[RMDB]
RNA sequence: GGGAACGACUCGAGUAGAGUCGAAAAGUACUAUGCCCGCCAUUAUUGAUGCAUGCUCCACCUCCCACUCCUUAAUAGUUGCUUUGAAGUUUCCUUUCGGUGGGUUCUGGAGCGUCUUUAUCAGAAAUCCUUUAGAAAACUUCGGUUUUCUAAAGGAAAAAGAAACAACAACAACAAC
Reactivity to DMS in 0.01 (KOAc 150mM, MgCl2 10mM, bicine 150mM(pH8.5), 24C), signal-to-noise 1, nucleotides 027 to 126: g010u000a060c090u000a050u000g010c020c020c020g030c140c090a070u010u020a080u000u000g020a040u000g010c150a060u000g000c020u000c020c000a030c020c030u000c000c000c010a030c050u000c060c080u010u000a040a070u000a080g010u010u000g020c030u000u000u000g020a090a170g000u000u000u010c010c020u010u000u010c120g000g010u000g000g010g010u000u000c060u000g010g020a020g010c000g020u000c020u000u020u010a030u000c070a100g000a100a110a090
Structure probing data (DMS) for a 177-nucleotide construct. It was measured as part of the RMDB library M2PK90. Reactivities are given for positions 27 through 126. For DMS, 1,286 sequencing reads were counted.